[RMDB]
RNA sequence: GGGAACGACUCGAGUAGAGUCGAAAAAUGCCUCCACAGCCUUUUCGGUUACUGGCUCCGAACCAAUAAUCAGGCCCUCAACAGCAGAAAGAUCCAAGCCCUCAGAAGGCGUUGCAUAACGUGCAGCGCCUCCGAACCGAUUCGUCGGUUCGGAGGCAAAAGAAACAACAACAACAAC
Reactivity to 2A3 in 0.01 (KOAc 150mM, MgCl2 10mM, bicine 150mM(pH8.5), 24C), signal-to-noise 1, nucleotides 027 to 126: a040u040g040c000c010u070c060c000a070c000a020g020c000c010u100u110u110u150c120g060g000u000u100a060c000u060g040g030c000u000c040c000g070a080a070c010c050a040a080u120a070a020u130c040a050g000g080c000c020c000u020c010a010a140c030a000g000c020a010g170a030a100a060g030a010u020c000c020a060a000g020c010c020c000u030c040a010g010a130a000g000g000c000g000u000u030g000c010a010u060a130a130c120g010u050g000c010a000g030c000
Reactivity to DMS in 0.01 (KOAc 150mM, MgCl2 10mM, bicine 150mM(pH8.5), 24C), signal-to-noise 2, nucleotides 027 to 126: a100u010g020c010c020u000c020c080a070c090a180g020c020c030u000u000u010u000c050g020g020u000u000a050c080u000g000g040c050u000c050c120g000a080a140c050c030a060a050u020a050a040u020c060a100g000g000c040c010c020u000c040a060a070c080a050g020c040a020g000a050a050a120g000a040u010c040c040a110a090g030c030c010c000u020c100a130g010a060a070g000g000c010g010u000u000g030c020a030u000a100a110c260g000u000g020c000a030g000c060